About this RNA
An RNA of 177 nucleotides, treated with 2A3 and DMS and read out base by base. The RNA was probed in 150 mM KOAc, 10 mM MgCl2 and 150 mM bicine (pH 8.5) at 24 C. Values cover nucleotides 27 to 126. For 2A3, 1,937 sequencing reads were counted.
RNA sequence: GGGAACGACUCGAGUAGAGUCGAAAAUAGGUCGUGUUCGCACGACCUAAGAUAAAAUGCAUAAAAUGCCAGUAACCCGAAACACAUGGGAGUGCACCUGGCCUACGAUGUCGUUCGCGACAUCGAACGCCUAUCUCUCAUUCGUGAGAGAUAGGCGAAAAGAAACAACAACAACAAC
Reactivity to 2A3 in 0.01 (KOAc 150mM, MgCl2 10mM, bicine 150mM(pH8.5), 24C), signal-to-noise 2, nucleotides 027 to 126: u060a000g000g000u000c000g010u010g030u030u070c280g020c040a000c020g000a000c000c000u000a000a000g000a020u130a010a140a050a030u100g000c010a020u150a260a300a080a020u100g020c000c010a010g010u080a100a110c020c000c020g030a130a190a020c140a000c020a140u130g070g000g020a100g080u120g000c030a070c070c000u000g000g000c000c020u040a050c010g000a010u010g010u020c000g030u000u090c260g020c000g070a000c000a000u010c000g000a050a010
Reactivity to DMS in 0.01 (KOAc 150mM, MgCl2 10mM, bicine 150mM(pH8.5), 24C), signal-to-noise 2, nucleotides 027 to 126: u000a000g000g010u000c010g060u010g000u000u010c200g150c000a000c030g010a010c000c000u000a000a080g030a120u000a060a030a040a090u010g010c020a090u000a020a110a090a210u020g010c020c020a010g000u010a120a120c000c020c000g010a050a070a100c140a030c130a080u020g010g000g020a130g000u000g000c070a110c170c030u010g010g010c010c150u010a110c010g000a030u000g000u000c010g000u000u010c170g010c000g000a000c000a000u000c000g020a040a100